[RMDB]
RNA sequence: GGGAACGACUCGAGUAGAGUCGAAAAGAUAUGGAAUCAGUACAAGACUGAUGACCUCGAUCGGAAACGAUCGAGCAAGGUUGUACGAUUCCUAAGUCAAACGGUCCCUACUUCGGUAGGGACCGAACUCUGUACGAUACUUCGGUAUCGUACAGAGAAAAGAAACAACAACAACAAC
Reactivity to 2A3 in 0.01 (KOAc 150mM, MgCl2 10mM, bicine 150mM(pH8.5), 24C), signal-to-noise 2, nucleotides 027 to 126: g020a020u000a020u060g010g020a000a020u020c090a200g030u020a010c020a070a270g300a300c110u080g210a300u040g020a250c000c010u010c010g000a000u010c000g000g020a010a010a010c020g010a000u010c020g020a000g020c000a110a200g070g040u180u290g000u060a000c030g000a000u000u000c010c000u000a020a010g000u000c030a100a090a100c010g000g000u030c000c020c000u010a000c000u000u090c230g090g000u010a000g030g000g000a000c000c000g020a010a000
Reactivity to DMS in 0.01 (KOAc 150mM, MgCl2 10mM, bicine 150mM(pH8.5), 24C), signal-to-noise 2, nucleotides 027 to 126: g000a020u010a050u000g000g000a020a000u010c000a150g070u000a000c000a260a230g000a150c040u020g000a040u000g010a100c300c000u010c000g010a000u020c040g000g010a040a000a040c000g010a000u000c000g020a010g000c010a010a020g000g060u000u050g020u000a000c000g000a000u000u000c000c000u000a000a080g000u000c000a040a180a300c020g000g000u000c010c000c000u000a010c010u000u000c200g010g000u000a000g000g000g000a000c010c000g040a030a010

Overview: Conditions: 150 mM KOAc, 10 mM MgCl2 and 150 mM bicine (pH 8.5), 24 C. Structure probing data (2A3 and DMS) for a 177-nucleotide construct. For DMS, 1,317 sequencing reads were counted. 2A3 adducts were read by reverse transcription with SuperScript II with manganese. The 2A3 profile rests on 3,842 reads.